[RMDB]
RNA sequence: GGGAACGACUCGAGUAGAGUCGAAAAGCGCGUAGGUUCAGAUGAUGGGCCCGCAUCUGUACGAAAGCUAGACGAAAGUCCAGCCUACGUGCAUGAGCACGCGGGCCCCGUGCUCUACAGCAAAAGAGGUCAUAGCUACCUUCGGGUAGCUAUGACCAAAAGAAACAACAACAACAAC
Reactivity to DMS in 0.01 (KOAc 150mM, MgCl2 10mM, bicine 150mM(pH8.5), 24C), signal-to-noise 2, nucleotides 027 to 126: g000c080g000c070g000u020a040g000g000u000u040c100a020g010a020u000g000a150u000g050g000g030c000c000c000g020c000a080u020c000u000g000u040a010c000g000a080a180a300g000c000u000a040g000a000c000g030a160a080a190g000u000c000c090a030g000c000c020u010a200c000g000u010g000c000a000u010g000a070g000c150a170c300g000c020g000g000g000c010c000c010c070g020u000g000c080u010c030u020a020c050a070g030c110a160a020a000a090g010a210
Reactivity to 2A3 in 0.01 (KOAc 150mM, MgCl2 10mM, bicine 150mM(pH8.5), 24C), signal-to-noise 3, nucleotides 027 to 126: g040c020g000c000g020u030a020g030g030u110u110c080a050g030a150u130g010a090u110g100g010g010c010c000c000g000c010a030u000c000u000g010u040a010c010g050a060a000a000g000c000u000a000g000a010c000g060a120a030a000g010u000c010c000a000g000c000c000u000a010c000g010u010g000c000a010u150g020a010g020c110a050c160g020c000g000g010g010c000c000c000c000g010u020g000c000u000c000u020a030c040a050g060c020a050a100a000a030g100a080
The data come from the RNA Mapping Database (RMDB), library OK1LIB. The record gives the reactivity of an RNA of 177 nucleotides to DMS and 2A3. For 2A3, 2,706 sequencing reads were counted. Conditions: 150 mM KOAc, 10 mM MgCl2 and 150 mM bicine (pH 8.5), 24 C. Reactivities are given for positions 27 through 126.